[RMDB]
An RNA of 207 nucleotides, treated with 2A3 and read out base by base.
Conditions: 150 mM KOAc, 10 mM MgCl2 and 150 mM bicine (pH 8.5), 24 C.
Reactivities are given for positions 27 through 156.
RNA sequence: GGGAACGACUCGAGUAGAGUCGAAAAGCAGUUCGCUCUCGCUGCCUAAUAAGCACCGAUAGCGCUUGGGUGUCAGACCGGGGAGUUCCCGACCCGGACCCUGGCAUAAUCUAGGGAACUCAACCGUCCGCCCGGGCUGCGGGGGCGGAUGGGAAAUAUUCUAUAGUGUCUUCGGACACUAUAGAAUAAAAGAAACAACAACAACAAC
Reactivity to 2A3 in 0.01 (KOAc 150mM, MgCl2 10mM, bicine 150mM(pH8.5), 24C), signal-to-noise 2, nucleotides 027 to 156: g010c000a010g030u050u130c010g000c000u000c010u000c030g000c050u040g010c010c000u180a190a080u290a200a020g020c010a010c010c060g050a050u040a020g010c040g010c080u060u100g080g030g020u070g060u090c040a030g000a100c020c040g000g000g000g000a090g080u050u000c030c000c010g030a080c020c010c040g000g060a050c120c030c000u000g000g020c060a040u100a130a040u090c090u090a090g020g000g030a050a070c040u060c100a050a090c020c010g010u000c000c000g000c000c020c010g000g060g000c010u040g000c030g030g000g020g010g000c000g000g000a000u000g000g010g020a040a030a010u070